Structure probing data (DMS and 2A3) for a 177-nucleotide construct. The 2A3 profile rests on 1,211 reads. DMS adducts were read by reverse transcription with MarathonRT.
RNA sequence: GGGAACGACUCGAGUAGAGUCGAAAACGCUAACACAGCGGUGGCCUCAAGGACGUAGGGUAUGUUUAGCGGCAGUUGUGAUUUCUCACACUGACCGCUAGACGCCUGCAAAGAAGCGUGUUAAGUAGUGGAUCCAAAAUUUCGAUUUUGGAUCCACAAAAGAAACAACAACAACAAC
Reactivity to DMS in 0.01 (KOAc 150mM, MgCl2 10mM, bicine 150mM(pH8.5), 24C), signal-to-noise 1, nucleotides 027 to 126: c050g000c060u000a070a100c080a030c060a100g010c030g000g010u000g000g030c040c020u020c150a090a160g010g030a080c120g000u000a060g000g010g010u010a050u010g030u000u010u000a000g000c000g000g000c020a020g000u000u010g040u000g000a040u010u000u000c230u000c000a000c000a000c000u020g000a120c000c010g040c000u000a000g010a010c040g010c000c000u000g000c090a080a040a130g000a060a120g000c050g000u000g010u000u000a080a070g030u020a050
Reactivity to 2A3 in 0.01 (KOAc 150mM, MgCl2 10mM, bicine 150mM(pH8.5), 24C), signal-to-noise 1, nucleotides 027 to 126: c010g000c020u040a060a000c030a010c030a130g000c030g080g000u030g060g030c020c000u070c100a030a070g080g010a060c060g000u030a050g000g010g020u120a140u300g010u060u000u010a000g000c000g020g010c000a010g000u220u140g010u020g030a060u110u210u100c120u070c010a010c010a000c040u050g020a240c010c010g000c000u000a000g000a020c000g010c020c000u000g020c040a000a100a040g040a010a010g080c020g010u030g020u090u090a040a060g010u080a020